[RMDB]
RNA sequence: GGGAACGACUCGAGUAGAGUCGAAAAUAGUUAUAUUGAUAGAUAUAAACUCAACAAUAUAACGCGUAAUGCUUGAGUUUAUAUCUAUGCAUUACGCACGGUGGAGAUGCGAAAGCAUUUCCACCGAGCACCAUCAUCCCUUCGGGGAUGAUGGUGCAAAAGAAACAACAACAACAAC
Reactivity to 2A3 in 0.01 (KOAc 150mM, MgCl2 10mM, bicine 150mM(pH8.5), 24C), signal-to-noise 1, nucleotides 027 to 126: u080a000g110u120u050a240u110a060u100u190g000a000u020a000g000a000u000a000u000a020a000a000c010u000c020a000a000c000a160a000u040a080u000a110a090c160g000c000g090u070a240a000u070g000c110u000u000g000a010g020u000u020u000a000u060a000u000c000u000a000u000g010c060a000u000u040a080c180g000c130a000c110g000g070u060g000g000a050g080a000u000g000c010g190a130a050a000g000c000a000u000u000u000c000c060a000c000c030g000a000

Structure probing data (2A3) for a 177-nucleotide construct. It was measured as part of the RMDB library OK1LIB. For 2A3, 597 sequencing reads were counted.